[RMDB]
RNA sequence: GGGAACGACUCGAGUAGAGUCGAAAAGUAAACCGUUCUGCUCAGGUUCAGACUCCGGCAGGCCUGACGGAUACUGAGUCCAAAUGUCGUUAUCAGAUGAGUGACCAGCUCACGCUUAAAGGCUGGUUAUGUAAUUUUGCUUCGGCAAAAUUACAUAAAAAGAAACAACAACAACAAC
Reactivity to 2A3 in 0.01 (KOAc 150mM, MgCl2 10mM, bicine 150mM(pH8.5), 24C), signal-to-noise 4, nucleotides 027 to 126: g140u130a010a060a060c070c020g010u040u020c010u000g020c010u010c050a030g000g000u080u020c040a020g030a060c030u000c000c000g030g000c020a020g060g040c010c070u050g010a010c010g000g010a010u020a070c030u030g030a040g070u060c000c000a040a090a090u150g000u010c000g030u040u070a110u170c020a040g060a230u070g030a070g060u020g030a080c020c000a010g000c010u040c010a050c040g150c040u130u230a130a020a010g060g000c000u010g000g000u000
Reactivity to DMS in 0.01 (KOAc 150mM, MgCl2 10mM, bicine 150mM(pH8.5), 24C), signal-to-noise 4, nucleotides 027 to 126: g030u030a050a070a110c100c040g010u000u010c000u010g000c050u000c060a160g010g000u020u000c020a030g010a130c120u000c020c050g010g000c050a040g000g000c050c030u010g010a040c070g000g000a100u000a120c020u000g020a070g000u010c010c050a040a080a110u050g000u000c010g010u000u000a050u010c040a100g010a090u050g020a080g000u020g000a050c010c020a010g010c000u000c050a050c080g000c100u010u040a080a100a070g000g010c010u000g010g000u000
Background:
Structure probing data (2A3 and DMS) for a 177-nucleotide construct. Source: RMDB libraries RFM100 and RFMREP, as collected in RNAgym. The reactions ran in a buffer of 150 mM KOAc, 10 mM MgCl2 and 150 mM bicine (pH 8.5), at 24 C.